This 177-nucleotide RNA was probed chemically with DMS and 2A3. The reactions ran in a buffer of 150 mM KOAc, 10 mM MgCl2 and 150 mM bicine (pH 8.5), at 24 C. It was measured as part of the RMDB library OK2TRN. For DMS the reverse transcriptase was MarathonRT. For 2A3 the reverse transcriptase was SuperScript II with manganese.
RNA sequence: GGGAACGACUCGAGUAGAGUCGAAAAUCAGAAUCAUCUUUUGCAGAUUCUUCUGUAGUUUCAGAAUCAGACACAAGUUUGGCAGAAGGAAGUGUCAGCUGCUUAGAUGAAAGUCUUGGACAUAACACGGUCAUUAGUAUUUCGAUACUAAUGACCGAAAAGAAACAACAACAACAAC
Reactivity to DMS in 0.01 (KOAc 150mM, MgCl2 10mM, bicine 150mM(pH8.5), 24C), signal-to-noise 5, nucleotides 027 to 126: u020c060a070g020a110a120u010c010a030u000c010u000u000u010u010g010c010a010g010a140u010u010c180u000u000c010u000g010u000a100g020u000u010u010c110a050g010a070a070u010c120a110g000a020c030a070c080a110a210g000u000u000u000g010g010c100a050g000a040a030g010g010a120a080g020u010g010u010c090a150g030c010u000g010c020u000u000a020g000a020u000g000a030a060a100g000u000c020u010u000g000g000a060c120a050u010a070a120c190a170
Reactivity to 2A3 in 0.01 (KOAc 150mM, MgCl2 10mM, bicine 150mM(pH8.5), 24C), signal-to-noise 4, nucleotides 027 to 126: u140c010a010g090a000a070u050c010a010u000c030u040u220u100u080g000c000a070g000a210u150u000c000u030u030c020u010g050u030a120g130u060u170u180c080a070g060a100a070u090c020a050g050a010c010a000c000a100a190g060u100u130u090g110g000c020a030g010a070a020g050g020a090a030g030u020g060u090c040a020g020c030u020g010c010u020u030a010g010a010u010g030a070a050a010g040u000c040u100u130g080g050a030c040a080u150a100a030c060a020